The record gives the reactivity of an RNA of 177 nucleotides to DMS and 2A3.
RNA sequence: GGGAACGACUCGAGUAGAGUCGAAAACAAGGGAUGAGGAUUGACUGCAACCCCUGCCCAGAGCUGGAGGCCUCAUCCUCCCUCUCUCCAUCUCCCCCGGCCAGCGAGGCAGCUGAGGGUGCUGCGGUGUUUUAAAUUAGUUCGCUAAUUUAAAACAAAAAGAAACAACAACAACAAC
Reactivity to DMS in 0.01 (KOAc 150mM, MgCl2 10mM, bicine 150mM(pH8.5), 24C), signal-to-noise 9, nucleotides 027 to 126: c230a130a130g010g000g000a030u000g010a030g000g010a260u010u010g000a130c040u010g000c050a060a080c030c010c010c030u000g010c020c020c150a150g000a140g010c040u000g000g000a100g010g000c020c010u000c020a020u000c000c000u000c010c010c020u000c080u010c020u000c020c030a100u010c060u000c010c020c010c020c030g010g010c030c040a040g010c060g000a100g010g010c030a070g010c280u010g000a080g010g010g010u000g020c030u000g000c020g010g010
Reactivity to 2A3 in 0.01 (KOAc 150mM, MgCl2 10mM, bicine 150mM(pH8.5), 24C), signal-to-noise 5, nucleotides 027 to 126: c030a090a160g040g000g010a010u020g010a020g010g010a050u080u220g130a080c030u050g010c030a050a210c010c010c000c030u040g010c020c020c020a060g050a030g050c020u020g030g030a050g030g140c000c000u000c000a020u000c000c000u030c000c000c000u000c000u000c010u010c010c030a170u050c050u080c040c000c000c010c010g010g030c020c010a020g010c010g020a050g060g000c010a000g000c020u030g010a050g010g020g000u050g000c020u010g000c020g010g020